[RMDB]
RNA sequence: GGGAACGACUCGAGUAGAGUCGAAAACACCAGCUGACAGUGUCAUGAUUAUAGUCCCUCAAGGACCUUUACAGUCAGAGAAACUUUAAGUAAUGGUAGCCCAGAUCUUCACAAUCCCAAAAGGGACCUAAAUCUGCUGGGUCAGGAAGGCUGAAGGCCCAUGGCCUCGUUUCGACGAGGCCAUGGGAAAAGAAACAACAACAACAAC
Reactivity to 2A3 in 0.01 (KOAc 150mM, MgCl2 10mM, bicine 150mM(pH8.5), 24C), signal-to-noise 1, nucleotides 027 to 156: c070a050c020c010a000g030c030u030g020a000c010a100g000u000g010u120c000a100u160g070a110u100u130a080u100a090g030u000c000c000c000u090c020a000a120g090g000a000c000c000u040u060u020a170c040a000g040u030c060a010g040a000g000a160a070a000c030u020u210u180a120a060g000u040a090a090u040g040g020u000a010g040c000c000c040a020g080a150u070c060u220u160c010a000c050a110a120u120c060c020c020a080a160a140a080g000g000g000a000c010c000u040a090a090a050u060c040u060g030c020u040g000g000g110u040c000a010g010g110a040a010g120g000c120u060g110a030a000g170g020
The data come from the RNA Mapping Database (RMDB), library OK3TST. The record gives the reactivity of an RNA of 207 nucleotides to 2A3. Conditions: 150 mM KOAc, 10 mM MgCl2 and 150 mM bicine (pH 8.5), 24 C. 2A3 adducts were read by reverse transcription with SuperScript II with manganese. The 2A3 profile rests on 380 reads.